Background: Source: RMDB libraries RFM100 and RFMREP, as collected in RNAgym. This 177-nucleotide RNA was probed chemically with DMS and 2A3. Conditions: 150 mM KOAc, 10 mM MgCl2 and 150 mM bicine (pH 8.5), 24 C. For 2A3 the reverse transcriptase was SuperScript II with manganese. DMS adducts were read by reverse transcription with MarathonRT.
RNA sequence: GGGAACGACUCGAGUAGAGUCGAAAAUCCAAAGCCAGUGAUUGUCAAACAGAACGUAAAUUAAUGCGGCUAUCACUCCACAAUGUUGAGCCGGCUUUCCAGGGCUACUGCAUUACUUUUCGGCUCGUUAUUUCAAACAAUUCGUUGUUUGAAAUAAAAAAGAAACAACAACAACAAC
Reactivity to DMS in 0.01 (KOAc 150mM, MgCl2 10mM, bicine 150mM(pH8.5), 24C), signal-to-noise 9, nucleotides 027 to 126: u010c010c020a130a140a120g000c060c050a050g020u010g000a040u000u000g010u010c030a050a050a070c050a040g000a040a050c070g020u010a060a090a120u010u010a050a050u010g000c050g000g000c020u000a040u000c030a040c010u010c080c070a090c160a070a050u020g000u010u010g010a050g010c020c010g010g000c130u000u000u010c080c070a080g010g000g000c030u010a050c060u000g010c040a040u020u010a080c060u000u000u000u000c010g010g000c010u000c020g010
Reactivity to 2A3 in 0.01 (KOAc 150mM, MgCl2 10mM, bicine 150mM(pH8.5), 24C), signal-to-noise 9, nucleotides 027 to 126: u000c010c000a070a020a010g040c020c020a040g050u030g080a070u080u090g030u060c030a030a070a060c020a060g060a060a030c050g040u100a110a070a100u140u160a060a060u200g020c000g000g000c010u010a020u060c010a020c010u010c030c010a090c030a100a090u110g020u060u050g040a010g010c000c000g050g000c020u090u080u030c050c040a050g000g040g000c020u080a110c010u110g010c010a030u050u070a080c020u030u040u020u030c000g000g000c000u000c010g010